[RMDB]
RNA sequence: GGGAACGACUCGAGUAGAGUCGAAAAUUCGUGAUUUCUUUACUUCUGACAGUGGUGACGGAGAGGAAAAUCAACGAUAGCACAAGCGAUAGCAUCAUCACUGCUAGUUUUUCCUACUCAAGCAAACGAGCUAUUUUAGGUUCGCCUAAAAUAGCUCAAAAGAAACAACAACAACAAC
Reactivity to DMS in 0.01 (KOAc 150mM, MgCl2 10mM, bicine 150mM(pH8.5), 24C), signal-to-noise 3, nucleotides 027 to 126: u000u020c030g030u000g020a030u000u000u020c020u000u010u000a050c020u000u000c010u000g000a160c070a160g010u000g020g040u020g010a230c230g010g000a070g020a050g000g000a000a010a030a080u000c010a050a100c020g010a070u000a110g020c080a060c130a100a080g030c060g010a050u000a070g000c010a300u000c060a100u000c080a070c140u000g000c010u000a070g000u000u000u000u000u000c000c010u000a070c120u010c080a050a090g000c070a070a060a120c200
Reactivity to 2A3 in 0.01 (KOAc 150mM, MgCl2 10mM, bicine 150mM(pH8.5), 24C), signal-to-noise 2, nucleotides 027 to 126: u070u020c020g000u020g040a050u000u030u030c020u010u120u100a260c000u060u030c000u040g060a030c030a150g130u100g170g130u150g170a050c040g010g000a040g020a030g070g070a020a080a020a030u020c030a020a160c020g030a030u030a030g040c030a030c060a170a020g010c000g050a030u040a050g020c020a060u080c010a020u080c000a080c060u020g000c010u000a030g070u000u020u000u060u030c000c020u050a140c060u070c110a100a130g100c030a140a030a080c080